[RMDB]
RNA sequence: GGGAACGACUCGAGUAGAGUCGAAAAGGACUUCGGUGGCCAUCAGCUGCAACACCGACAAGCCGGACCCGGUGGCCAUGGCCGAUGCGCUGGGGCGCCUUUGGAUGUAGCGGGGCUACCGCGGUUGUCCGGAGGAAUGAUUCGUCAUUCCUCCGGAAAAAGAAACAACAACAACAAC
Reactivity to DMS in 0.01 (KOAc 150mM, MgCl2 10mM, bicine 150mM(pH8.5), 24C), signal-to-noise 1, nucleotides 027 to 126: g010g000a000c000u000u000c010g000g030u010g040g010c000c040a080u020c030a180g040c030u000g010c010a070a080c110a090c040c040g010a090c190a110a270g040c090c020g040g030a130c040c070c030g020g020u010g050g000c030c040a070u000g010g000c020c040g030a080u010g010c110g050c000u010g000g000g010g010c070g000c150c060u000u010u000g020g020a140u010g010u000a030g040c030g010g020g020g000c020u000a020c000c000g010c000g000g000u000u000g000
Reactivity to 2A3 in 0.01 (KOAc 150mM, MgCl2 10mM, bicine 150mM(pH8.5), 24C), signal-to-noise 1, nucleotides 027 to 126: g120g000a010c020u000u000c030g030g020u000g000g020c020c000a210u080c100a150g050c020u050g000c000a120a120c050a060c060c000g040a050c060a010a030g000c040c030g130g080a300c010c010c040g000g000u090g140g000c040c060a070u090g090g100c060c000g180a130u120g050c130g010c020u000g000g000g060g020c010g000c030c030u000u080u050g050g000a060u060g030u000a010g000c030g000g020g010g000c000u000a020c000c000g010c000g010g000u000u120g030
This 177-nucleotide RNA was probed chemically with DMS and 2A3.
Conditions: 150 mM KOAc, 10 mM MgCl2 and 150 mM bicine (pH 8.5), 24 C.
The DMS profile rests on 1,204 reads.
For 2A3, 930 sequencing reads were counted.